RNA sequence: GGGAACGACUCGAGUAGAGUCGAAAAGCGCAGCAUUACGAUGCUGCGCAACCACUAUGUGAUCUUAUUAAAAUCAGGUUAAAUUUCGAGGUUAAAAAUAGUUUUAAUAUUGCUAUAGUCUACCCUCGUGCAACGCGCAUGCUACGGCAUGCGCGAACACUGGUAUGGUAUUCGUACCAUACCAGUGAAAAGAAACAACAACAACAAC
Reactivity to 2A3 in 0.01 (KOAc 150mM, MgCl2 10mM, bicine 150mM(pH8.5), 24C), signal-to-noise 2, nucleotides 027 to 156: g000c000g000c000a010g000c000a000u000u090a050c190g090a010u020g000c000u010g000c000g000c000a000a000c020c000a040c050u140a100u200g100u070g080a030u050c030u060u200a130u090u240a240a160a150a110u100c010a030g070g000u050u060a120a140a130u200u180u110c000g000a010g030g000u040u050a030a040a020a040a030u030a040g010u000u020u080u190a240a200u230a110u220u180g000c000u000a010u020a060g100u080c030u030a060c010c010c000u010c010g010u020g020c010a020a090c000g000c000g000c000a000u000g000c010u010a030c190g130g000c010a000u030g000c030g000c000g000a000a010